[RMDB]
RNA sequence: GGGAACGACUCGAGUAGAGUCGAAAAGCCUUGUAAAAGAAAUAAAUGAACGCUGAACUAAGAGUAAGCGGAAUUCUUAGGGGGUAGUUCAAGGCGAAACCCCGAAGACAUGGAAACAUGUCGAAAAGGGAUAAGUAAUCUUCGGAUUACUUAUCCCAAAAGAAACAACAACAACAAC
Reactivity to 2A3 in 0.01 (KOAc 150mM, MgCl2 10mM, bicine 150mM(pH8.5), 24C), signal-to-noise 3, nucleotides 027 to 126: g000c000c000u040u020g300u120a060a060a090a060g140a030a070a010u180a050a110a030u170g020a050a030c000g000c000u000g010a060a000c050u030a130a060g040a000g160u010a030a000g040c000g030g020a010a100u070u010c020u020u040a020g000g000g060g000g030u030a050g040u070u160c000a010a000g000g000c000g010a080a070a080c010c000c000c000g000a040a040g000a000c020a000u010g000g000a020a010a010c010a000u000g000u000c000g000a000a030a020a000
Reactivity to DMS in 0.01 (KOAc 150mM, MgCl2 10mM, bicine 150mM(pH8.5), 24C), signal-to-noise 3, nucleotides 027 to 126: g000c010c000u010u000g030u000a050a050a040a110g010a110a040a080u040a040a100a080u010g020a300a240c040g010c000u000g030a110a300c070u010a100a100g020a060g010u000a080a030g030c060g030g000a040a100u010u000c040u000u010a100g000g000g000g000g030u000a130g010u000u000c030a020a000g000g000c000g010a050a090a090c100c000c010c040g010a050a080g000a010c000a000u000g000g000a150a090a120c000a000u010g000u010c010g000a020a060a130a080
An RNA of 177 nucleotides, treated with 2A3 and DMS and read out base by base. For DMS, 3,691 sequencing reads were counted. The RNA was probed in 150 mM KOAc, 10 mM MgCl2 and 150 mM bicine (pH 8.5) at 24 C.